[RMDB]
RNA sequence: GGGAACGACUCGAGUAGAGUCGAAAAACCCUCGCCCGAUGUUCGCUGAUUCGUCAGCCGCAUGCCCAGGUGGCCGCGAUCUUCAAGGCUACGGCGCGGAUCGGUCCGCGCUGAUCGUUUUCCUCCAACCGCAUAACCGGCUUCGGCCGGUUAUGAACGGGUAUAUGCAGUUCGCUGCAUAUACCCGAAAAGAAACAACAACAACAAC
Reactivity to 2A3 in 0.01 (KOAc 150mM, MgCl2 10mM, bicine 150mM(pH8.5), 24C), signal-to-noise 1, nucleotides 027 to 156: a000c020c020c000u060c030g070c000c020c020g040a040u040g020u080u090c040g010c010u000g020a020u060u060c110g030u000c110a010g010c000c020g040c010a020u110g050c020c030c020a010g010g010u000g010g020c010c000g080c050g040a010u020c000u030u020c020a010a010g010g000c000u000a000c000g010g000c000g000c000g000g030a120u120c070g110g090u030c000c000g000c000g000c010u000g000a020u050c000g020u080u060u140u070c030c050u080c060c000a070a060c060c020g010c020a000u000a000a000c000c000g000g000c020u020u050c120g050g000c050c000g000g000u000u000a000u000g000a000a000
Chemical mapping of a 207-nucleotide RNA with 2A3. For 2A3, 1,169 sequencing reads were counted.